[RMDB]
RNA sequence: GGGAACGACUCGAGUAGAGUCGAAAAGAUAUGGAGCUAGGGAGACGGGUCGGGACUAUUCGGAAACGAACGAAUCCCGACCGUCGAAGAACUAGCUCCUAAGUCAAAACUCGCCUUCGGGCGAGAACCUGUAAGAAAUGUUCGCAUUUCUUACAGGAAAAGAAACAACAACAACAAC
Reactivity to 2A3 in 0.01 (KOAc 150mM, MgCl2 10mM, bicine 150mM(pH8.5), 24C), signal-to-noise 2, nucleotides 027 to 126: g010a000u070a040u170g000g000a000g000c000u010a000g020g060g000a050g030a010c050g120g140g250u140c020g000g000g010a020c060u090a060u010u000c000g000g040a100a110a120c050g020a040a000c030g030a070a230u020c000c010c010g000a000c000c000g000u010c020g000a020a000g000a000a010c000u000a000g000c000u000c000c000u000a000a010g000u000c010a000a000a070a170c000u010c000g000c010c020u070u090c280g100g030g000c000g000a000g000a000a070
Reactivity to DMS in 0.01 (KOAc 150mM, MgCl2 10mM, bicine 150mM(pH8.5), 24C), signal-to-noise 4, nucleotides 027 to 126: g000a030u010a300u000g010g010a020g010c000u000a000g000g000g020a150g010a030c000g010g010g030u010c010g010g000g000a020c060u000a300u000u010c010g020g000a110a060a200c020g020a000a020c150g010a080a170u000c000c000c010g010a020c030c010g000u000c000g000a070a120g000a100a150c010u000a020g000c010u000c000c000u000a000a100g030u000c020a130a050a110a150c000u000c000g000c000c010u000u010c220g020g000g020c000g010a000g010a020a070
Structure probing data (2A3 and DMS) for a 177-nucleotide construct. For 2A3 the reverse transcriptase was SuperScript II with manganese. The data come from the RNA Mapping Database (RMDB), library TTRDEL. The 2A3 profile rests on 6,909 reads. The RNA was probed in 150 mM KOAc, 10 mM MgCl2 and 150 mM bicine (pH 8.5) at 24 C.